RNA sequence: GGGAACGACUCGAGUAGAGUCGAAAAUCGUGUGAUCUCGUGUGUGUGAACACGAGAACACACGUACGAGAUCGUUCGAACACUCUCUCGUGAUCGAACGUUCACGAGAGAGUUCGAGAGUGAGUUCGAACUCGAGUGUACGAUCGUGAACACACUCGUUAAUAGAAAACUUCGGUUUUCUAUUAACAAAAGAAACAACAACAACAAC
Reactivity to 2A3 in 0.01 (KOAc 150mM, MgCl2 10mM, bicine 150mM(pH8.5), 24C), signal-to-noise 7, nucleotides 027 to 156: u100c000g000u000g000u000g010a070u010c000u000c000g020u010g000u000g010u020g080u110g210a090a010c010a000c010g010a010g000a010a000c000a000c000a010c010g010u010a010c020g020a020g030a160u050c020g000u020u010c010g020a050a020c020a010c030u010c000u000c000u000c010g000u010g000a010u030c060g130a130a080c210g010u000u010c000a000c000g010a000g000a000g000a000g000u000u010c010g040a000g000a000g040u090g010a040g020u030u030c020g010a060a040c030u020c030g030a040g040u100g040u080a080c060g030a100u100c060g080u100g110a060a010c050a000c000a010c070u070c050
Reactivity to DMS in 0.01 (KOAc 150mM, MgCl2 10mM, bicine 150mM(pH8.5), 24C), signal-to-noise 3, nucleotides 027 to 156: u000c000g050u020g050u000g010a040u000c000u000c000g030u020g040u000g000u030g040u010g020a110a090c020a040c030g020a050g030a020a100c010a010c000a000c000g020u000a030c040g010a120g000a050u010c010g040u010u000c010g020a050a100c070a120c010u000c010u000c010u010c020g020u000g010a050u000c010g000a230a210c220g010u000u000c000a020c010g010a020g010a070g010a030g020u000u010c040g010a150g020a110g010u000g000a130g010u000u000c010g010a080a110c030u000c000g000a090g020u000g030u000a140c060g010a140u000c060g010u010g000a100a170c070a100c010a020c020u000c040